[RMDB]
RNA sequence: GGGAACGACUCGAGUAGAGUCGAAAAGGUGAUUGUGAUACUCGCAACUGUCAUUCAUCGAAUGACAGUUUUAGACUGCUACAAUCACAUUACGUGACUCAAUUAUUUAGCAGUCUAAUUGAUAACAUAACGCGAGAUAUGUUAAAGUCACGUAUCGCCACUACCUAGUCUUCGGACUAGGUAGUGGAAAAGAAACAACAACAACAAC
Reactivity to 2A3 in 0.01 (KOAc 150mM, MgCl2 10mM, bicine 150mM(pH8.5), 24C), signal-to-noise 4, nucleotides 027 to 156: g120g000u000g000a000u010u000g020u010g030a030u020a060c000u010c010g000c010a000a010c000u000g000u010c000a000u010u000c040a150u180c240g010a000a000u000g000a000c000a000g000u000u000u000u000a000g000a000c020u000g000c010u020a010c010a010a000u000c000a000c000a010u040u070a000c000g000u000g010a000c010u020c110a130a120u160u090a110u140u210u070a030g010c010a000g010u000c000u000a000a030u020u090g080a040u080a180a010c030a060u130a080a020c060g000c010g020a000g060a060u030a010u030g080u030u090a170a120a010g000u000c000a000c000g000u010a020u040c030g020
Reactivity to DMS in 0.01 (KOAc 150mM, MgCl2 10mM, bicine 150mM(pH8.5), 24C), signal-to-noise 1, nucleotides 027 to 156: g000g020u000g020a020u000u000g010u000g010a170u000a070c010u000c030g020c020a130a080c000u020g000u000c000a000u000u000c010a180u000c190g020a030a020u010g010a020c010a020g020u000u000u000u000a040g010a010c010u010g040c000u010a070c040a030a020u000c010a000c010a130u000u000a020c020g050u010g010a020c030u000c030a120a170u000u000a140u000u000u000a050g000c010a070g000u000c020u000a010a030u010u010g010a190u000a030a080c090a020u000a050a130c120g030c000g000a030g000a150u000a050u000g010u000u000a100a100a050g030u000c000a030c010g020u000a030u020c200g030
About this RNA: The record gives the reactivity of an RNA of 207 nucleotides to 2A3 and DMS. DMS (dimethyl sulfate) methylates the pairing face of unpaired adenines and cytosines. The reactions ran in a buffer of 150 mM KOAc, 10 mM MgCl2 and 150 mM bicine (pH 8.5), at 24 C. The DMS profile rests on 2,703 reads. Source: RMDB library OK3TST, as collected in RNAgym. For 2A3 the reverse transcriptase was SuperScript II with manganese.